[RMDB]
RNA sequence: GGGAACGACUCGAGUAGAGUCGAAAAGAAGUUGUGUUCGCACAACUUCAAAAGCUAGUAGCUACUGGGCAAGUAGUACCUAGUAGUAGCCCGUUCAAGUAAAAAUCAACCUCUUCGGAGGUUGAAAGCGCUUAUAUUAGUUCGCUAAUAUAAGCGCAAAAGAAACAACAACAACAAC
Reactivity to DMS in 0.01 (KOAc 150mM, MgCl2 10mM, bicine 150mM(pH8.5), 24C), signal-to-noise 2, nucleotides 027 to 126: g000a030a000g000u000u000g010u000g010u000u010c210g070c000a000c000a000a000c000u000u000c000a030a050a100a240g000c020u000a000g020u000a180g010c010u000a000c000u010g010g040g000c220a110a050g000u010a030g020u000a110c300c010u000a010g000u010a070g010u000a120g010c010c000c000g010u000u020c090a130a080g030u010a010a080a080a150a130u000c000a020a030c000c000u000c000u000u010c200g040g010a030g000g000u020u000g000a010a040a070
Reactivity to 2A3 in 0.01 (KOAc 150mM, MgCl2 10mM, bicine 150mM(pH8.5), 24C), signal-to-noise 1, nucleotides 027 to 126: g000a010a010g000u010u010g020u000g020u040u080c130g080c060a010c010a000a010c000u030u030c000a020a000a020a020g000c020u020a010g010u020a050g110c000u000a000c000u000g110g160g160c180a150a030g000u000a020g000u000a060c020c000u020a010g020u000a050g010u030a010g020c000c000c030g030u130u260c190a140a030g040u120a160a060a030a040a140u040c020a000a000c000c010u000c030u030u070c280g090g000a010g000g000u010u000g010a000a000a000